[RMDB]
RNA sequence: GGGAACGACUCGAGUAGAGUCGAAAAAAUGGCCAGGGAGCAACUAGUGAUAGUGAUACUGAAAAAAUUAGCUUUAAACCUGGUAACCAGAUUGACUUUAAUAGGUUAUUCACCUUACCAGUAACUGAUGGGUAGAAAAUUUCGAUUUUCUACCCAUAAAAGAAACAACAACAACAAC
Reactivity to DMS in 0.01 (KOAc 150mM, MgCl2 10mM, bicine 150mM(pH8.5), 24C), signal-to-noise 2, nucleotides 027 to 126: a110a050u000g020g010c040c030a100g000g000g010a070g020c090a150a050c030u000a030g000u010g000a120u000a020g010u000g000a230u030a110c080u020g000a010a040a110a110a040a070u020u000a080g000c050u000u000u000a070a090a100c130c000u010g000g010u000a030a090c120c130a160g000a070u010u000g020a030c030u000u000u000a090a110u000a110g000g000u000u000a020u000u000c030a110c130c130u010u010a060c070c030a070g000u000a080a140c140u010g010
Notes
Structure probing data (DMS) for a 177-nucleotide construct. The reactions ran in a buffer of 150 mM KOAc, 10 mM MgCl2 and 150 mM bicine (pH 8.5), at 24 C. Reactivities are given for positions 27 through 126. Source: RMDB library OK2TRN, as collected in RNAgym.